Structure probing data (DMS and 2A3) for a 177-nucleotide construct. The 2A3 profile rests on 14,978 reads. DMS adducts were read by reverse transcription with MarathonRT. The RNA was probed in 150 mM KOAc, 10 mM MgCl2 and 150 mM bicine (pH 8.5) at 24 C.
RNA sequence: GGGAACGACUCGAGUAGAGUCGAAAACCCGUUCAUUUCGAUGAACGGGAGUGGGUAUCCCUAGGACCAGUAGUGGGACCCGUAGUGGCCGUGGGACCAGUAAAGAGUUAACAUUCGUGUUAACUAAACAUGAAGAAUCAUUCGUGAUUCUUCAUGUAAAAGAAACAACAACAACAAC
Reactivity to DMS in 0.01 (KOAc 150mM, MgCl2 10mM, bicine 150mM(pH8.5), 24C), signal-to-noise 9, nucleotides 027 to 126: c000c000c000g010u000u000c000a010u000u000u010c170g010a020u000g010a010a000c000g010g000g000a040g010u000g000g010g010u000a120u000c010c010c000u000a130g010g010a190c050c040a100g010u000a080g020u000g010g000g000a090c030c010c020g010u000a060g010u000g000g010c030c020g010u000g010g010g010a090c040c030a090g010u010a070a090a110g000a030g010u000u000a000a010c000a050u000u010c200g020u000g000u000u000a000a010c000u000a060a080
Reactivity to 2A3 in 0.01 (KOAc 150mM, MgCl2 10mM, bicine 150mM(pH8.5), 24C), signal-to-noise 6, nucleotides 027 to 126: c000c000c000g000u000u000c010a030u030u030u140c220g140a020u010g000a010a000c010g000g020g000a020g060u130g020g030g020u090a100u100c020c000c010u030a100g010g080a140c020c040a040g070u100a020g090u250g030g030g060a060c010c010c000g000u070a070g060u040g040g000c040c030g020u070g030g010g000a080c000c010a010g040u090a020a140a050g160a020g010u000u000a010a010c010a020u030u120c170g040u050g000u020u000a000a010c020u010a090a110